Source: RMDB library OK3TST, as collected in RNAgym. An RNA of 207 nucleotides, treated with 2A3 and DMS and read out base by base. Reactivities are rounded to 0.1 and cut off at 0 and 3. DMS adducts were read by reverse transcription with MarathonRT. Reactivities are given for positions 27 through 156. Conditions: 150 mM KOAc, 10 mM MgCl2 and 150 mM bicine (pH 8.5), 24 C.
RNA sequence: GGGAACGACUCGAGUAGAGUCGAAAAACUCGCACCAGUUAAGGUACUGUAACUGAUCCUCGAGGAGUAGUGUCCGAGACUCAGGACACGAGUCUCUCUAGUACUGAACUAGAAGUACUCCUGGAGUACAGUACCGUACUCCAGCGAGCGUGUGAGACACUAUCAUGGCGUUCGCGCCAUGAUAGUGAAAAGAAACAACAACAACAAC
Reactivity to 2A3 in 0.01 (KOAc 150mM, MgCl2 10mM, bicine 150mM(pH8.5), 24C), signal-to-noise 2, nucleotides 027 to 156: a030c010u010c000g000c010a020c000c030a080g000u060u100a090a020g000g000u010a000c010u010g040u090a300a130c020u060g070a260u070c030c000u000c070g160a010g000g000a000g010u080a000g030u020g050u040c050c070g040a040g100a160c130u100c230a050g030g070a010c010a020c080g000a010g010u000c000u000c000u000c000u000a000g000u000a080c130u160g170a120a010c000u030a000g000a060a040g040u000a020c010u010c000c000u000g150g000a010g000u030a000c000a000g000u020a000c000c010g010u010a000c000u040c020c050a030g020c020g060a080g010c090g010u010g000u000g000a010g020a030
Reactivity to DMS in 0.01 (KOAc 150mM, MgCl2 10mM, bicine 150mM(pH8.5), 24C), signal-to-noise 2, nucleotides 027 to 156: a040c030u000c020g030c090a300c050c000a070g000u000u000a070a020g010g030u000a020c000u000g010u010a020a080c070u020g000a150u010c160c050u000c010g000a090g030g000a130g040u000a100g020u010g050u000c040c010g020a110g030a130c030u000c020a290g000g000a110c060a050c100g000a070g000u000c000u000c060u000c010u010a040g020u000a300c200u000g000a090a060c020u000a020g010a030a130g050u000a010c010u010c010c010u010g000g010a070g050u000a070c010a020g010u010a000c040c000g020u000a010c020u020c000c010a200g000c070g010a090g090c000g010u020g020u000g000a200g030a300